[RMDB]
RNA sequence: GGGAACGACUCGAGUAGAGUCGAAAAACGCCCCAUUUUCGUAAGAUAAUGGGGAUAACAAAGGAAUCACAAGAGACACUUGCAGGUGUGUGAAGACGAAGUUCAUCACAUGGGAGGGCACCGGGUGUCUUUAUUUGCCUUCCCUGCCCGGCUCCCCGCAAUCAAAGAAGUUCGCUUCUUUGAUUGCAAAAGAAACAACAACAACAAC
Reactivity to 2A3 in 0.01 (KOAc 150mM, MgCl2 10mM, bicine 150mM(pH8.5), 24C), signal-to-noise 2, nucleotides 027 to 156: a010c100g030c010c000c000c000a000u030u010u020u020c030g020u070a180a070g000a000u000a000a000u020g000g030g000g020a010u070a020a030c070a050a110a030g100g000a040a070u150c050a040c040a220a050g030a000g020a050c030a010c090u130u300g020c090a090g000g010u010g010u020g000u050g030a040a030g030a010c020g120a070a050g010u110u030c090a090u040c010a070c030a060u090g010g010g000a040g010g000g000c010a010c020c070g020g040g000u010g000u030c040u040u080u050a100u060u080u100g030c010c010u000u020c000c030c020u020g020c000c020c010g040g000c010u040c000c010c000c010